[RMDB]
RNA sequence: GGGAACGACUCGAGUAGAGUCGAAAACGAUUAGCAUUCGUGCUAAUCGAAUCAGGUAGUAGCUAUCUCUAUUACCUGUAGUGGCCAACGUCCGGACAGAGAAUCGAGUCCUGUUCGCAGGACUCAACAAGAGAUACAUCUUCGGAUGUAUCUCUUGAAAAGAAACAACAACAACAAC
Reactivity to DMS in 0.01 (KOAc 150mM, MgCl2 10mM, bicine 150mM(pH8.5), 24C), signal-to-noise 7, nucleotides 027 to 126: c020g010a010u000u000a000g010c000a040u000u010c220g030u000g000c000u000a010a000u000c000g010a070a070u000c010a010g000g010u000a010g010u000a000g010c300u010a120u010c210u020c010u000a000u000u000a000c000c000u000g010u000a040g010u010g010g000c020c020a060a090c120g010u010c030c030g000g000a070c090a090g000a130g000a120a120u010c140g000a020g010u000c000c000u000g010u000u010c180g010c010a010g000g000a020c000u000c000a050a090
Reactivity to 2A3 in 0.01 (KOAc 150mM, MgCl2 10mM, bicine 150mM(pH8.5), 24C), signal-to-noise 4, nucleotides 027 to 126: c010g010a010u000u000a000g000c010a010u010u050c210g100u060g000c010u010a000a000u000c000g000a000a090u070c000a000g000g010u010a000g020u000a000g000c110u160a070u300c070u000c000u110a010u020u010a010c000c000u000g000u010a070g050u040g060g020c010c030a080a030c070g070u020c030c020g040g050a050c050a060g130a010g070a130a110u200c130g000a010g000u000c000c000u000g020u030u040c230g000c040a000g010g000a000c000u010c000a000a000